[RMDB]
RNA sequence: GGGAACGACUCGAGUAGAGUCGAAAAGGGUUGUUGUUCGCAACAACCCAAAGAAGCUCAUGAUGACGCAAACAACGGCGUCGCCGUGAGGAAACGGCGAAAAAACACGACCCUUCGGGGUCGUGAAUCGUAUUUGUAUCUUCGGAUACAAAUACGAAAAAGAAACAACAACAACAAC
Reactivity to 2A3 in 0.01 (KOAc 150mM, MgCl2 10mM, bicine 150mM(pH8.5), 24C), signal-to-noise 3, nucleotides 027 to 126: g000g000g000u000u000g000u010u010g000u010u000c030g000c010a000a000c000a000a000c010c000c010a000a010a000g000a030a010g080c000u010c010a030u050g060a040u040g010a020c010g000c030a020a220a230c070a200a070c190g100g000c000g000u000c000g000c000c000g020u010g010a040g000g080a080a170a010c040g060g020c010g030a100a060a000a020a010a030c000a000c010g000a000c000c000c000u020u050c220g040g000g000g000u000c000g000u000g000a000a020
Reactivity to DMS in 0.01 (KOAc 150mM, MgCl2 10mM, bicine 150mM(pH8.5), 24C), signal-to-noise 4, nucleotides 027 to 126: g000g010g020u000u000g010u000u000g020u000u010c160g030c010a030a010c010a000a000c010c000c000a010a030a060g000a130a130g000c010u010c000a020u000g010a040u000g010a020c010g010c010a030a070a130c250a060a120c250g000g000c010g020u000c000g010c020c000g030u000g000a050g000g010a040a080a060c070g010g000c060g010a000a040a060a070a100a120c000a020c000g010a020c000c000c000u000u000c170g030g010g000g010u000c000g010u000g010a010a060